Source: RMDB library OK2TRN, as collected in RNAgym. This 177-nucleotide RNA was probed chemically with DMS and 2A3. The reactions ran in a buffer of 150 mM KOAc, 10 mM MgCl2 and 150 mM bicine (pH 8.5), at 24 C. For DMS the reverse transcriptase was MarathonRT. The 2A3 profile rests on 3,193 reads.
[RMDB]
RNA sequence: GGGAACGACUCGAGUAGAGUCGAAAAGCACCGCCGCAGUGCAGCCAACCUCCCACCGCACACACGCUGCCCGAGCCUGCUGCUGUCGCAGUCAUACCCGGUCCGGGGCCGGACCCGGGUAGGCGUACCUAUUAAAUAAUUUCGAUUAUUUAAUAGGAAAAGAAACAACAACAACAAC
Reactivity to DMS in 0.01 (KOAc 150mM, MgCl2 10mM, bicine 150mM(pH8.5), 24C), signal-to-noise 5, nucleotides 027 to 126: g010c040a060c030c050g010c060c030g030c070a100g020u010g010c030a100g000c050c040a100a150c090c050u000c020c010c030a100c080c050g020c060a030c080a080c100a060c080g010c030u000g010c030c010c020g000a110g000c040c040u000g010c020u000g010c020u000g030u000c100g000c050a070g010u010c090a140u000a050c000c000c000g020g010u000c010c010g030g010g020g010c170c030g020g000a020c060c030c040g010g000g020u000a000g010g010c010g010u000a100
Reactivity to 2A3 in 0.01 (KOAc 150mM, MgCl2 10mM, bicine 150mM(pH8.5), 24C), signal-to-noise 2, nucleotides 027 to 126: g000c000a020c000c000g140c010c030g000c040a000g040u030g070c000a010g030c030c020a050a090c020c030u000c010c000c000a030c010c030g000c010a010c010a010c000a000c080g030c010u050g020c000c020c010g030a030g030c010c010u030g010c010u000g040c020u070g080u160c060g030c040a010g010u040c020a090u050a070c020c000c010g010g000u000c010c000g000g030g230g040c120c010g030g030a040c090c300c030g000g000g000u000a020g000g000c000g010u010a020